About this RNA:
The record gives the reactivity of an RNA of 207 nucleotides to DMS and 2A3. For 2A3, 876 sequencing reads were counted. It was measured as part of the RMDB library M2RFPK. The reactions ran in a buffer of 150 mM KOAc, 10 mM MgCl2 and 150 mM bicine (pH 8.5), at 24 C. 2A3 adducts were read by reverse transcription with SuperScript II with manganese.

[RMDB]
RNA sequence: GGGAACGACUCGAGUAGAGUCGAAAAGGGGCUGACAGGAAUCGACAGUAGAGUGUAUCAUGUCAGUAAGCAUGCCGGGGAAUGGUGGUUUACCCCCUUAUCAAAUGAUUACCGACCAAUAAUUGGCUUAGCUCGUUGGGCUUCGGCCCAACGAGAAUACAAACAACCGAUUCGUCGGUUGUUUGUAAAAAGAAACAACAACAACAAC
Reactivity to DMS in 0.01 (KOAc 150mM, MgCl2 10mM, bicine 150mM(pH8.5), 24C), signal-to-noise 1, nucleotides 027 to 156: g010g040g000g040c060u000g000a090c040a040g030g060a060a090u000c030g020a120c090a190g040u020a190g020a110g020u000g000u000a170u000c050a060u010g000u000c040a090g020u010a060a060g050c070a070u000g010c080c010g020g050g000g030a110a110u010g010g030u010g010g000u000u000u000a130c050c010c000c020c000u000u000a130u020c020a060a100a100u000g030a130u000u000a040c000c030g000a020c030c010a060a110u010a050a120u010u000g040g040c000u000u010a120g010c020u000c000g030u000u010g020g040g010c000u000u010c300g030g000c000c000c010a000a000c000g000a000g000a050a120
Reactivity to 2A3 in 0.01 (KOAc 150mM, MgCl2 10mM, bicine 150mM(pH8.5), 24C), signal-to-noise 2, nucleotides 027 to 156: g010g030g000g000c010u050g000a020c010a020g000g080a070a100u060c060g050a070c050a080g140u190a080g060a020g060u100g000u050a070u110c020a020u020g040u070c040a000g060u100a060a000g010c000a020u100g080c030c010g000g000g000g000a080a040u140g000g030u020g000g080u020u010u190a120c000c020c010c000c010u030u050a100u110c020a000a040a160u140g060a040u120u070a080c030c020g050a030c020c010a020a090u200a140a130u050u050g040g010c030u020u030a040g030c000u010c000g000u030u000g000g000g000c000u010u010c160g070g000c000c000c000a000a000c010g040a000g000a000a000